RNA sequence: GGGAACGACUCGAGUAGAGUCGAAAAGUCUAGCGAAGGGAUCCCACCCGGGAAACACGCAAGUCGCGAAUUAGGCCGACCGGCCAAGGUCAAUUGCAGAACUCAACUGCAUGAGUAAGCUAGACGAGGCGGUAUGACUAUUCGUAGUCAUACCGCCAAAAGAAACAACAACAACAAC
Reactivity to DMS in 0.01 (KOAc 150mM, MgCl2 10mM, bicine 150mM(pH8.5), 24C), signal-to-noise 1, nucleotides 027 to 126: g020u000c010u000a050g000c000g020a170a170g040g080g010a060u000c000c000c000a300c170c000c000g030g050g010a100a150a170c130a210c100g000c070a100a080g000u080c050g000c050g010a210a060u000u010a120g070g000c020c060g000a120c170c300g000g000c040c000a070a100g000g010u000c010a120a080u000u020g000c000a030g000a060a070c110u000c300a100a130c100u020g000c000a000u000g000a170g000u000a020a100g000c040u000a030g000a000c000g000a050
Reactivity to 2A3 in 0.01 (KOAc 150mM, MgCl2 10mM, bicine 150mM(pH8.5), 24C), signal-to-noise 1, nucleotides 027 to 126: g000u000c000u010a000g010c010g110a240a120g050g020g000a030u020c020c020c000a060c000c010c010g000g010g030a090a120a040c070a020c030g040c030a050a090g170u180c060g000c050g080a070a100u090u060a130g000g000c050c030g010a190c050c110g010g040c030c000a020a030g070g030u010c030a040a080u000u030g000c000a000g040a200a060c030u080c240a050a220c070u040g000c000a000u000g020a020g060u070a000a060g000c000u000a000g010a020c030g000a030